Source: RMDB library OK2TRN, as collected in RNAgym. This 177-nucleotide RNA was probed chemically with 2A3 and DMS. Reactivities are rounded to 0.1 and cut off at 0 and 3. DMS adducts were read by reverse transcription with MarathonRT.
[RMDB]
RNA sequence: GGGAACGACUCGAGUAGAGUCGAAAAUAAACUAUAUAUAGAUCCAUUUGUGACCUCUAUUUAAUUUGGUGGCUCCCCGAGGAUUCGAACCUACGUACCUUCCGGUUAUGAGCCGGGUGCUCAUACCGAGGUAGCUAAUAUUCGUAUUAGCUACCUCAAAAGAAACAACAACAACAAC
Reactivity to 2A3 in 0.01 (KOAc 150mM, MgCl2 10mM, bicine 150mM(pH8.5), 24C), signal-to-noise 2, nucleotides 027 to 126: u040a020a030a020c030u020a010u030a050u050a030u040a300g040a090u050c020c000a010u100u220u180g140u110g060a050c030c060u020c030u000a060u080u140u110a170a120u080u090u100g080g030u030g020g000c000u000c000c010c020c040g020a040g030g000a050u110u030c040g000a020a040c000c000u050a040c040g070u040a080c000c010u080u050c040c040g050g020u110u100a010u010g000a000g000c010c020g120g140g010u160g000c000u020c000a020u020a030c040c010
Reactivity to DMS in 0.01 (KOAc 150mM, MgCl2 10mM, bicine 150mM(pH8.5), 24C), signal-to-noise 3, nucleotides 027 to 126: u010a070a070a130c010u010a080u020a130u010a120u000a070g000a040u000c000c010a250u010u000u000g010u010g020a040c050c030u000c060u010a020u010u010u000a050a050u000u000u000g010g020u000g000g010c050u000c020c030c020c020g020a090g000g000a140u000u000c040g010a030a170c040c020u000a070c090g010u000a110c080c050u010u000c090c030g000g010u000u000a010u000g000a020g020c000c040g000g000g010u000g030c010u000c010a030u010a030c240c050